[RMDB]
RNA sequence: GGGAACGACUCGAGUAGAGUCGAAAAGCCGGAGCGCCAGCUUCGGUGGAGGCAUUGGUGGGAUACUACCCUGGCUGUAUUGAAAUUCUAACCCGCGCCCCUGAUCGGGGCGGGAGACAGUGUCAGGAACUGCUUCGAUUUUCGAAUCGAAGCAGUUAAAAGAAACAACAACAACAAC
Reactivity to DMS in 0.01 (KOAc 150mM, MgCl2 10mM, bicine 150mM(pH8.5), 24C), signal-to-noise 1, nucleotides 027 to 126: g010c000c000g020g000a010g020c000g030c150c210a150g030c010u000u000c010g000g020u000g020g000a060g000g010c100a070u010u010g010g030u000g000g000g010a110u000a040c090u000a090c130c010c000u000g000g030c020u000g000u000a080u000u010g010a080a100a130u000u000c050u000a140a180c030c000c000g010c040g010c010c000c000c010u010g050a140u000c210g000g010g000g020c000g010g000g010a040g000a040c090a040g000u000g010u010c030a080g000g010
The record gives the reactivity of an RNA of 177 nucleotides to DMS. Values cover nucleotides 27 to 126. It was measured as part of the RMDB library OK2TRN.